[RMDB]
RNA sequence: GGGAACGACUCGAGUAGAGUCGAAAAAUUCGCCGAGAAGCCUCUGUUCGAAAUCAUCGGGAGUGAUCCAGAUGACGGUCCUGCCAUGAGACCGCAACGAGAGCAUGUCGCAUCGAAUGCACUCGGGUAUACUAGGUGACGUUCGCGUCACCUAGAACUGAAAGACAAUAUUCGUAUUGUCUUUCAGAAAAGAAACAACAACAACAAC
Reactivity to DMS in 0.01 (KOAc 150mM, MgCl2 10mM, bicine 150mM(pH8.5), 24C), signal-to-noise 4, nucleotides 027 to 156: a140u000u000c030g000c040c010g000a120g000a150a120g010c030c010u010c040u010g010u000u000c030g000a070a100a060u010c000a020u000c020g010g040g010a060g020u020g010a210u000c000c000a080g010a060u000g000a050c000g010g010u000c010c000u010g000c090c170a090u000g000a050g010a030c010c010g030c050a060a050c030g000a100g010a120g010c030a090u000g010u000c050g020c090a160u000c060g000a090a210u000g010c030a150c020u000c010g010g000g020u000a080u000a130c020u000a010g010g020u000g000a020c010g030u010u000c300g050c020g030u000c000a000c000c000u000a000g010a030a160
Reactivity to 2A3 in 0.01 (KOAc 150mM, MgCl2 10mM, bicine 150mM(pH8.5), 24C), signal-to-noise 6, nucleotides 027 to 156: a000u090u040c030g030c020c020g020a020g020a080a030g020c030c020u040c140u140g040u030u050c050g040a070a080a100u040c020a000u020c040g020g000g020a030g030u140g040a070u040c010c020a040g050a140u080g040a070c020g000g000u000c010c000u050g140c050c020a110u090g010a030g010a140c040c000g010c050a020a030c030g030a010g000a020g050c030a040u190g120u100c050g000c030a060u070c110g110a090a040u050g000c010a010c040u010c010g000g000g060u090a060u020a160c000u000a000g000g000u000g000a010c000g010u030u020c210g010c010g070u000c000a000c000c000u000a000g000a010a000